[RMDB]
RNA sequence: GGGAACGACUCGAGUAGAGUCGAAAAGGGGUCAGAGGUUACAGAUAAUCAAAGGGAAGAGGCCGUACAUGACCAGAGGGAAAGGGCCCCAGCUGUCCAGGGUGCAGAUAAUCAGAGGGCACAGGCCUCCCUAGGAAUCAUUCGUGAUUCCUAGGGAAAAAGAAACAACAACAACAAC
Reactivity to DMS in 0.01 (KOAc 150mM, MgCl2 10mM, bicine 150mM(pH8.5), 24C), signal-to-noise 4, nucleotides 027 to 126: g010g010g010g010u000c070a070g000a100g020g010u000u030a100c150a120g010a090u010a060a090u010c130a080a090a140g000g000g010a100a070g000a100g010g010c030c030g020u010a060c150a090u010g000a090c040c040a110g000a110g000g000g010a060a090a070g010g010g010c030c010c010c030a090g000c080u000g010u000c030c070a090g010g000g020u000g000c050a050g000a080u000a080a090u010c100a030g000a120g000g020g000c060a040c070a070g010g000c040c080
Reactivity to 2A3 in 0.01 (KOAc 150mM, MgCl2 10mM, bicine 150mM(pH8.5), 24C), signal-to-noise 2, nucleotides 027 to 126: g070g020g000g010u030c040a020g040a040g160g000u050u040a060c080a050g110a170u110a160a050u170c060a120a090a030g050g010g000a090a040g040a040g040g000c020c000g020u070a040c010a100u110g050a050c010c030a040g050a040g080g040g030a010a100a150g020g050g020c000c040c000c010a020g000c040u060g020u000c020c010a030g060g000g040u100g030c020a000g050a150u090a090a000u100c030a050g030a100g080g000g020c020a010c020a020g030g070c010c000